Description: Structure probing data (2A3) for a 177-nucleotide construct. The data come from the RNA Mapping Database (RMDB), library RFM100. Conditions: 150 mM KOAc, 10 mM MgCl2 and 150 mM bicine (pH 8.5), 24 C. The 2A3 profile rests on 424 reads.
RNA sequence: GGGAACGACUCGAGUAGAGUCGAAAAAAGGUGAAGAUAACUCUUUGUAAAUGUCCUACAGAAAUAUAGUAGCUUUCUGUUCUUCCUUUGCAAGUAAAAAGGGUGGGUCGUUCCACUACUGACAUUUGUCAUAGUUCGCAUUCGUGCGAACUAUGACAAAAGAAACAACAACAACAAC
Reactivity to 2A3 in 0.01 (KOAc 150mM, MgCl2 10mM, bicine 150mM(pH8.5), 24C), signal-to-noise 1, nucleotides 027 to 126: a000a000g220g020u190g020a080a010g020a090u100a000a040c000u020c000u000u020u090g010u080a030a080a000u200g070u060c000c000u000a000c000a000g050a000a020a000u150a060u140a160g300u100a050g120c070u030u030u000c030u020g010u020u000c000u040u060c000c000u070u040u000g000c070a080a060g000u300a160a000a020a050a050g030g000g000u060g000g000g000u000c000g000u000u020c020c030a040c010u030a010c010u030g030a000c000a110u000u000u000
2A3 adducts were read by reverse transcription with SuperScript II with manganese.